About this RNA
Structure probing data (DMS and 2A3) for a 177-nucleotide construct. Conditions: 150 mM KOAc, 10 mM MgCl2 and 150 mM bicine (pH 8.5), 24 C. DMS (dimethyl sulfate) methylates the pairing face of unpaired adenines and cytosines. For 2A3 the reverse transcriptase was SuperScript II with manganese.
[RMDB]
RNA sequence: GGGAACGACUCGAGUAGAGUCGAAAAGGCGGGCGAGUGGGGUGUGUGGCCGAAAGCGCCUUGUACGCGCGCCGUGUGAAUGCUUUGUGCGGGUAGGGAGAGGGCGGCCACCGUCUUAUCCCCAUAGGCGGCUAUCGUGCUUCGGCAUGGUAGCCGCAAAAGAAACAACAACAACAAC
Reactivity to DMS in 0.01 (KOAc 150mM, MgCl2 10mM, bicine 150mM(pH8.5), 24C), signal-to-noise 3, nucleotides 027 to 126: g020g000c070g000g000g010c130g000a100g030u010g000g000g010g010u010g000u040g020u000g010g010c000c000g020a060a050a150g010c030g020c010c050u010u040g000u000a050c220g010c110g010c030g010c090c080g000u000g030u030g020a120a090u040g000c050u020u070u050g010u010g010c040g000g040g000u060a090g000g010g000a130g000a180g000g000g020c030g000g000c030c030a010c020c040g000u000c080u000u010a080u010c000c000c000c070a040u050a030g000
Reactivity to 2A3 in 0.01 (KOAc 150mM, MgCl2 10mM, bicine 150mM(pH8.5), 24C), signal-to-noise 2, nucleotides 027 to 126: g060g000c040g010g020g050c020g040a120g070u140g000g010g040g000u040g010u020g000u010g070g000c010c000g030a100a000a000g060c000g030c000c010u030u170g110u150a030c080g000c000g000c000g020c050c040g020u050g000u000g120a160a060u130g010c000u090u100u230g070u070g060c050g000g010g070u140a090g100g030g000a120g010a080g020g010g000c000g010g000c000c000a010c000c000g000u000c020u010u090a060u040c000c000c000c000a040u030a050g040

The data come from the RNA Mapping Database (RMDB), library OK1LIB.